[RMDB]
RNA sequence: GGGAACGACUCGAGUAGAGUCGAAAAGAUGGGCCUUCUGGCAAUGUACCUGGCCUCCCAGGAGGUCCUGAGGAAGAGAUAGACGGCCAGGGUCCGAUCAUACGAUAUAAACCUGCUCAACGUAUGAUCGGUUAUGACAAUUAAGAAGAGCAGGUUAGCGUCAUAUUAUCUUCGGAUAAUAUGACGCAAAAGAAACAACAACAACAAC
Reactivity to 2A3 in 0.01 (KOAc 150mM, MgCl2 10mM, bicine 150mM(pH8.5), 24C), signal-to-noise 2, nucleotides 027 to 156: g110a050u070g000g000g000c000c000u000u000c030u000g000g010c210a060a090u190g020u080a150c000c000u000g000g010c000c000u020c020c000c000a000g000g010a000g000g000u020c030c030u050g020a090g070g070a090a100g030a010g070a130u100a100g060a070c160g000g000c000c010a010g000g000g000u020c000c000g000a010u000c010a000u000a000c020g030a030u010a000u000a270a080a010c010c000u000g010c000u010c030a060a050c030g010u000a000u000g000a000u000c000g000g000u020u070a010u010g000a030c010a040a000u190u060a140a140g100a040a030g000a040g020c000a000g000g000u000u020a010